[RMDB]
RNA sequence: GGGAACGACUCGAGUAGAGUCGAAAAUAUUUUGGAAAAGUAGAUUCUACCAUAAUUCUCUUCCUUUCACUGUCUAUAAGGAAGCAGUAUUGAUCAGUUUUUUUCCUCUAAGAUUUCUGACUCCAUAUGUAAAGUAGAGAUUCGUCUCUACUUUACAAAAAGAAACAACAACAACAAC
Reactivity to DMS in 0.01 (KOAc 150mM, MgCl2 10mM, bicine 150mM(pH8.5), 24C), signal-to-noise 3, nucleotides 027 to 126: u010a060u010u010u010u010g000g000a070a060a060a070g000u000a140g000a050u010u010c060u000a060c070c090a090u010a050a070u000u000c010u000c000u000u000c000c000u000u000u000c140a110c190u010g010u010c140u010a120u000a030a020g010g000a030a030g000c150a010g010u000a040u000u010g000a060u010c120a060g020u000u000u010u000u000u000u000c020c000u010c120u010a070a110g000a080u000u000u000c050u010g000a110c100u000c010c030a080u010a100
Reactivity to 2A3 in 0.01 (KOAc 150mM, MgCl2 10mM, bicine 150mM(pH8.5), 24C), signal-to-noise 2, nucleotides 027 to 126: u060a020u010u170u070u090g040g020a080a000a020a000g020u030a050g000a090u080u010c000u040a030c020c020a120u120a160a080u100u040c020u000c000u000u020c000c000u050u010u150c140a140c090u220g110u270c110u210a160u020a200a010g020g010a030a000g000c070a000g010u010a020u070u040g030a020u030c030a030g070u000u040u000u000u010u020u080c040c010u090c020u080a100a130g030a250u060u150u040c050u120g050a100c000u080c060c020a030u140a140